Description:
This 177-nucleotide RNA was probed chemically with DMS and 2A3.
RNA sequence: GGGAACGACUCGAGUAGAGUCGAAAAAAGCAGGGUGUGAGAGAAACUCUCUCGCAGCCGGUUCGCGCAGCCACCCUUUUCGACUCUACUCGGGUUAGCUGCGCGAACUGGCUGGCGUUCCCCAGAAACAAAAUAUCAAGUUCGCUUGAUAUUUUGUAAAAGAAACAACAACAACAAC
Reactivity to DMS in 0.01 (KOAc 150mM, MgCl2 10mM, bicine 150mM(pH8.5), 24C), signal-to-noise 3, nucleotides 027 to 126: a080a070g000c100a050g020g000g020u010g010u010g010a080g010a060g000a140a140a140c120u000c000u000c010u000c020g020c020a010g020c000c000g000g010u000u000c010g010c000g010c000a030g000c020c040a050c020c020c020u000u010u010u000c020g010a010c010u000c010u000a000c000u000c010g000g000g010u000u000a030g010c010u000g010c010g000c010g010a010a010c010u000g000g010c000u000g010g010c000g000u000u000c000c000c000c150a160g010a110a080
Reactivity to 2A3 in 0.01 (KOAc 150mM, MgCl2 10mM, bicine 150mM(pH8.5), 24C), signal-to-noise 2, nucleotides 027 to 126: a010a000g240c110a050g010g040g020u050g010u050g020a050g010a010g030a130a190a120c030u020c000u000c020u030c090g100c100a000g000c000c000g000g000u010u000c010g000c000g020c030a000g010c000c010a020c000c000c030u100u080u060u130c030g000a010c000u000c010u120a000c000u010c000g010g000g000u010u020a010g020c000u020g000c020g060c000g000a010a010c000u020g000g000c010u020g010g000c010g020u000u010c020c000c000c010a040g070a040a220
Reactivities are rounded to 0.1 and cut off at 0 and 3. Reactivities are given for positions 27 through 126. 2A3 adducts were read by reverse transcription with SuperScript II with manganese.